[RMDB]
RNA sequence: GGGAACGACUCGAGUAGAGUCGAAAAUACCGUUCGGCCUUAAUUGGUUCUAGUGGAGGUGUGUGCUACUUAUCUGAAUUGCAAACCAAUCUCUCGUCUAGAUAUCACUCACGGGCCAUGGACCUCACCAUCGAGGAGGCUUCGGCCUCCUCGAUGGAAAAGAAACAACAACAACAAC
Reactivity to 2A3 in 0.01 (KOAc 150mM, MgCl2 10mM, bicine 150mM(pH8.5), 24C), signal-to-noise 2, nucleotides 027 to 126: u100a000c030c020g010u080u140c060g000g020c000c000u070u100a080a050u140u080g000g000u030u000c000u000a010g000u010g010g000a000g050g000u060g000u020g000u060g150c000u090a070c060u190u090a120u300c150u220g250a280a050u210u120g050c050a080a000a000c050c000a020a050u040c010u000c000u010c000g290u050c100u000a020g000a020u020a010u200c090a090c040u110c050a060c140g000g000g040c000c000a000u030g030g000a010c000c000u020c070a050